The record gives the reactivity of an RNA of 177 nucleotides to DMS and 2A3. The RNA was probed in 150 mM KOAc, 10 mM MgCl2 and 150 mM bicine (pH 8.5) at 24 C. Reactivities are given for positions 27 through 126. For DMS the reverse transcriptase was MarathonRT. For DMS, 2,459 sequencing reads were counted.
RNA sequence: GGGAACGACUCGAGUAGAGUCGAAAACGACAGCUUUUCGAAGCUGUCGAUUGGCAAAGGCUAGGACCGGCCAGACAAAGGUCCGAUAGCAAUUCGUAACGAAGCUCGCCUGCUUCGGCAGGCGAAAUGUAUAGACGUGGUUCGCCACGUCUAUACAAAAAGAAACAACAACAACAAC
Reactivity to DMS in 0.01 (KOAc 150mM, MgCl2 10mM, bicine 150mM(pH8.5), 24C), signal-to-noise 3, nucleotides 027 to 126: c000g010a010c000a000g010c010u000u000u000u020c130g040a020a010g020c000u000g010u000c010g000a030u020u010g020g020c130a090a140a110g000g020c010u000a100g010g000a020c010c000g020g010c010c000a140g010a100c290a040a050a100g000g020u000c000c000g020a120u000a060g010c060a100a100u010u000c030g000u000a100a090c100g000a050a040g020c060u000c030g010c000c000u000g020c000u000u000c140g020g000c000a000g000g000c010g000a000a010a030
Reactivity to 2A3 in 0.01 (KOAc 150mM, MgCl2 10mM, bicine 150mM(pH8.5), 24C), signal-to-noise 1, nucleotides 027 to 126: c000g010a000c000a020g000c000u060u090u070u180c180g070a020a010g010c000u000g000u000c000g010a090u000u080g040g020c030a050a090a180g060g000c000u020a050g040g000a000c010c020g000g100c010c010a050g020a060c100a040a060a000g020g020u020c010c000g010a110u090a000g000c010a040a210u030u050c050g050u170a070a140c160g030a070a020g080c000u000c000g020c010c010u000g040c000u060u020c130g040g010c000a000g070g050c010g000a030a000a000